[RMDB]
This 177-nucleotide RNA was probed chemically with DMS and 2A3. Values cover nucleotides 27 to 126. High DMS reactivity at an A or C suggests that its Watson-Crick edge is free.
RNA sequence: GGGAACGACUCGAGUAGAGUCGAAAACGUCUGCGUUUAGUGCCGUCUCCGGUCUGUGUCUUACAGGCUGUGGGACGGUUCUCACACCGCACUCACGGCCACAGAGCCACCGGAGAUCAUAGUACUGUUCUCUACUUCCCUUCGGGGAAGUAGAGAAAAAAGAAACAACAACAACAAC
Reactivity to DMS in 0.01 (KOAc 150mM, MgCl2 10mM, bicine 150mM(pH8.5), 24C), signal-to-noise 2, nucleotides 027 to 126: c180g020u010c050u000g000c130g000u000u000u000a020g000u000g000c010c190g010u000c000u000c040c010g000g010u010c040u000g010u000g000u020c160u050u000a010c120a110g000g000c060u030g010u100g020g050g030a300c010g020g000u000u000c010u000c220a200c180a070c070c030g000c100a130c020u040c060a100c060g000g000c000c000a100c210a220g000a070g000c010c200a060c000c000g000g000a070g000a030u030c140a110u000a060g020u000a030c110u000g050
Reactivity to 2A3 in 0.01 (KOAc 150mM, MgCl2 10mM, bicine 150mM(pH8.5), 24C), signal-to-noise 2, nucleotides 027 to 126: c100g120u060c060u030g080c030g070u010u000u140a070g010u050g050c000c010g030u010c000u050c000c000g020g000u010c020u000g030u000g120u160c100u110u280a050c060a050g000g000c020u020g010u210g020g000g000a030c000g020g000u000u020c000u010c000a070c020a010c010c020g000c010a080c050u020c000a020c000g000g010c010c020a080c020a100g040a030g010c020c010a060c040c000g080g030a010g000a000u040c050a080u140a070g030u020a020c040u020g040
The data come from the RNA Mapping Database (RMDB), library RFM100.